[RMDB]
RNA sequence: GGGAACGACUCGAGUAGAGUCGAAAAGUACGUGGCCAGUUCGGCUCGCGUGGCUGGCACCGACUGGGUCGUCGUCACACACGAACCCACCGAACAGGCCUACGGGUUCGUGAUGGCCGUCAACGAGCCAUUUAUGCCCAUUCGUGGGCAUAAAUGGAAAAGAAACAACAACAACAAC
Reactivity to DMS in 0.01 (KOAc 150mM, MgCl2 10mM, bicine 150mM(pH8.5), 24C), signal-to-noise 6, nucleotides 027 to 126: g000u020a030c040g010u010g010g010c000c020a170g020u010u020c070g020g000c060u010c110g000c100g020u010g000g000c060u020g000g010c020a080c050c030g000a080c090u020g010g020g000u000c060g010u000c020g010u010c060a070c090a300c030a000c000g000a010a010c020c010c020a230c050c040g000a120a090c170a100g010g000c300c080u060a050c140g000g020g000u000u000c010g020u000g000a130u010g010g000c010c040g010u000c090a100a080c060g000a110g010
Reactivity to 2A3 in 0.01 (KOAc 150mM, MgCl2 10mM, bicine 150mM(pH8.5), 24C), signal-to-noise 5, nucleotides 027 to 126: g080u060a040c040g020u040g040g000c010c010a040g010u060u130c060g050g010c060u050c060g050c020g020u030g050g030c060u070g020g000c020a030c020c010g100a110c080u090g060g000g040u030c020g020u010c010g040u060c020a020c000a000c010a000c100g000a010a020c010c000c020a020c000c020g040a170a090c080a150g020g010c000c000u040a050c070g000g020g000u000u020c010g000u030g010a030u030g050g010c050c010g060u050c030a050a030c040g020a010g030
Chemical mapping of a 177-nucleotide RNA with DMS and 2A3. The DMS profile rests on 12,509 reads. 2A3 adducts were read by reverse transcription with SuperScript II with manganese.